[RMDB]
RNA sequence: GGGAACGACUCGAGUAGAGUCGAAAAGAUAUGGACUAUGGUCUACCCACCAUCCGCAAAGCUUGGAUUUAAUUAUCGGAAACGAUAAUUUGUCAGCUUUGAUGGAUGAGGACCAUAGUCCUAAGUCCUUACAAUACGACUUCGGUCGUAUUGUAAGAAAAGAAACAACAACAACAAC
Reactivity to 2A3 in 0.01 (KOAc 150mM, MgCl2 10mM, bicine 150mM(pH8.5), 24C), signal-to-noise 4, nucleotides 027 to 126: g180a130u300a300u300g000g000a000c000u010a000u010g010g000u030c010u170a300c090c010c000a030c040c020a000u000c010c000g020c020a010a010a020g010c050u300u300g170g000a040u290u300u300a030a000u000u020a010u020c000g030g050a110a030a060c020g010a010u010a000a000u010u000u020g020u010c030a010g010c000u020u020u020g300a300u230g010g000a010u000g000a020g000g000a000c000c010a000u000a000g000u010c000c000u010a020a000g040u080c010
Reactivity to DMS in 0.01 (KOAc 150mM, MgCl2 10mM, bicine 150mM(pH8.5), 24C), signal-to-noise 4, nucleotides 027 to 126: g010a190u020a230u010g000g020a000c000u000a010u000g000g000u000c000u010a100c050c030c030a300c120c010a000u000c000c010g010c000a010a010a010g000c010u000u010g030g000a010u010u000u000a010a000u010u000a000u010c000g010g000a140a120a280c010g000a020u000a000a000u010u000u000g010u000c010a050g010c000u000u000u000g010a080u010g010g000a010u000g010a100g000g010a010c000c010a010u000a000g000u010c000c000u000a010a070g010u000c080